Structure probing data (2A3) for a 207-nucleotide construct. The RNA was probed in 150 mM KOAc, 10 mM MgCl2 and 150 mM bicine (pH 8.5) at 24 C. The 2A3 profile rests on 2,093 reads. The data come from the RNA Mapping Database (RMDB), library RNAMAK.
[RMDB]
RNA sequence: GGGAACGACUCGAGUAGAGUCGAAAAGGGGUCAAGGAGAUCGUCCAGGCUGAUGACCUACACUGAAGCCUCCACGGUGUAGCAAGGCCUGUGACGAUCGCGAAACUUGACGGAGGCACCCAAAACACUCUUAGCAGCUUCGGCUGCUAAGAGUGAACAACGGUAAGUUCUUCGGAACUUACCGUUGAAAAGAAACAACAACAACAAC
Reactivity to 2A3 in 0.01 (KOAc 150mM, MgCl2 10mM, bicine 150mM(pH8.5), 24C), signal-to-noise 2, nucleotides 027 to 156: g100g000g100g050u000c000a000a000g040g000a060g020a040u000c000g010u000c000c000a000g010g010c000u040g010a300u000g000a030c010c000u010a000c000a010c000u100g030a120a040g000c000c000u000c000c000a010c010g020g000u000g010u000a020g000c050a110a100g000g000c020c030u030g030u110g000a000c010g000a000u000c000g000c020g080a040a030a000c010u000u000g000a000c010g010g000a000g000g000c010a020c020c010c000a050a100a060a010c000a000c000u000c010u000u000a010g010c000a010g000c010u060u200c290g130g000c000u000g000c000u000a000a000g000a000g000u000g000a010a000